About this RNA:
Source: RMDB library OK1LIB, as collected in RNAgym. The record gives the reactivity of an RNA of 177 nucleotides to DMS and 2A3. Reactivities are given for positions 27 through 126. The RNA was probed in 150 mM KOAc, 10 mM MgCl2 and 150 mM bicine (pH 8.5) at 24 C. For 2A3 the reverse transcriptase was SuperScript II with manganese.
[RMDB]
RNA sequence: GGGAACGACUCGAGUAGAGUCGAAAAGCUGAGCUCGGUGGCCGUCAGCGAAGACAUCUCCCAUGGUAGUGCCGGAGUUGUCGAUUACCAGCUUGACUGGGGCCAACCUGGCAGUCUUGCUGGGAAAGGGAUGGUUCUCCUUCGGGAGGAUCAUCCCAAAAGAAACAACAACAACAAC
Reactivity to DMS in 0.01 (KOAc 150mM, MgCl2 10mM, bicine 150mM(pH8.5), 24C), signal-to-noise 9, nucleotides 027 to 126: g010c020u010g010a080g010c030u010c050g000g010u000g000g010c030c020g010u010c030a050g010c050g010a100a090g010a060c070a070u010c040u010c010c000c030a160u030g010g020u010a050g010u010g000c080c100g000g000a110g010u000u000g000u000c020g000a180u020u020a130c000c000a010g000c000u000u000g000a020c000u010g000g010g010g010c060c070a080a130c070c040u010g010g010c010a020g000u000c010u000u000g000c000u000g000g000g000a040a090a130
Reactivity to 2A3 in 0.01 (KOAc 150mM, MgCl2 10mM, bicine 150mM(pH8.5), 24C), signal-to-noise 9, nucleotides 027 to 126: g010c010u020g010a010g020c030u030c100g060g020u060g040g020c030c020g070u040c020a010g010c020g060a080a020g060a020c030a060u030c020u010c030c000c010a050u090g070g040u070a130g040u030g100c040c030g010g010a060g010u010u010g010u010c010g000a010u000u020a060c000c000a000g000c000u020u030g010a020c000u010g000g040g120g020c010c010a060a120c060c040u080g080g040c000a000g010u010c000u020u020g000c000u000g000g010g000a060a060a050